[RMDB]
RNA sequence: GGGAACGACUCGAGUAGAGUCGAAAAGAUAUGGACAUAUCCAAGAGGUUCAGAGGACGUACAUCUAUCGGAAACGAUAGAUGUACGUCUACCCACCUGAACUCCCCACCUUGGUAUGUCCUAAGUCCGUACAAACCUUGUUCGCAAGGUUUGUACGAAAAGAAACAACAACAACAAC
Reactivity to DMS in 0.01 (KOAc 150mM, MgCl2 10mM, bicine 150mM(pH8.5), 24C), signal-to-noise 1, nucleotides 027 to 126: g000a070u010a300u000g060g000a020c000a000u000a000u000c000c010a000a000g000a100g000g010u000u000c000a000g020a160g010g010a010c000g020u000a000c010a010u000c010u000a020u000c000g070g000a150a040a120c000g030a030u010a020g010a050u000g010u000a000c000g010u000c010u000a010c090c040c110a300c190c000u030g000a010a000c000u010c020c050c000c070a300c150c000u010u030g030g000u000a000u000g000u000c000c010u010a020a090g000u020c040
Chemical mapping of a 177-nucleotide RNA with DMS. Values cover nucleotides 27 to 126. The RNA was probed in 150 mM KOAc, 10 mM MgCl2 and 150 mM bicine (pH 8.5) at 24 C.